An RNA of 177 nucleotides, treated with 2A3 and DMS and read out base by base. Conditions: 150 mM KOAc, 10 mM MgCl2 and 150 mM bicine (pH 8.5), 24 C. Source: RMDB library TTRINS, as collected in RNAgym. 2A3 adducts were read by reverse transcription with SuperScript II with manganese. For DMS, 4,102 sequencing reads were counted. Reactivities are given for positions 27 through 126.

RNA sequence: GGGAACGACUCGAGUAGAGUCGAAAAGAUAUGGACUAGCUCACUACCCACCCGUAUAGUACAGCGAUGAAAUCUCUCGGAAACGAGAGAUGGAGCUGGAACUACGGAGGUGAGCUAGUCCUAAGUCCAUUGUGAUUACGUUCGCGUAAUCACAAUGAAAAGAAACAACAACAACAAC
Reactivity to 2A3 in 0.01 (KOAc 150mM, MgCl2 10mM, bicine 150mM(pH8.5), 24C), signal-to-noise 3, nucleotides 027 to 126: g110a090u300a280u300g000g000a000c010u000a010g000c000u020c020a010c010u220a260c020c060c040a050c030c010c020g020u020a020u020a020g010u000a000c030a000g030c000g300a300u060g030a040a010a000u010c010u000c000u000c000g020g040a130a140a120c020g010a000g000a010g000a010u000g000g010a010g000c000u010g000g010a010a000c000u010a000c000g000g000a000g000g000u000g010a000g010c000u000a000g000u010c000c000u000a000a000g000u000c030
Reactivity to DMS in 0.01 (KOAc 150mM, MgCl2 10mM, bicine 150mM(pH8.5), 24C), signal-to-noise 5, nucleotides 027 to 126: g010a120u000a240u010g050g010a010c000u000a010g000c010u000c020a010c030u010a100c070c050c090a300c120c000c010g000u020a010u000a040g020u000a180c040a000g000c000g020a150u020g000a140a130a010u000c000u000c000u000c000g000g010a140a150a180c000g010a030g000a010g000a000u000g000g000a080g020c000u000g010g000a120a100c140u000a010c000g010g000a080g020g000u000g000a010g010c000u000a000g000u000c000c010u000a010a130g010u000c070